[RMDB]
RNA sequence: GGGAACGACUCGAGUAGAGUCGAAAAGUCGGCGACCGCUGCGAUCCCGACGAGUUCGAGGUCCGUCUCGAGCGACGCCGCAGUCAUUCGGCCACCGAGAACUGGAUGCCCUCGUGGGACUCGUACCUAUAAUAGGCCUCUUCGGAGGCCUAUUAUAAAAAGAAACAACAACAACAAC
Reactivity to DMS in 0.01 (KOAc 150mM, MgCl2 10mM, bicine 150mM(pH8.5), 24C), signal-to-noise 2, nucleotides 027 to 126: g010u000c000g030g010c070g020a070c280c260g010c090u000g050c060g010a070u000c010c000c000g010a030c030g000a070g000u000u010c010g000a040g060g030u010c040c010g020u000c010u000c000g010a100g030c020g020a130c240g030c020c020g010c210a130g000u030c240a140u000u000c010g010g000c020c070a050c050c000g000a030g000a040a040c050u020g030g000a070u000g010c270c020c010u000c020g050u000g000g010g000a050c100u000c020g000u000a090c130c090

This 177-nucleotide RNA was probed chemically with DMS. The reactions ran in a buffer of 150 mM KOAc, 10 mM MgCl2 and 150 mM bicine (pH 8.5), at 24 C. For DMS, 1,139 sequencing reads were counted. Values cover nucleotides 27 to 126. It was measured as part of the RMDB library OK2TST.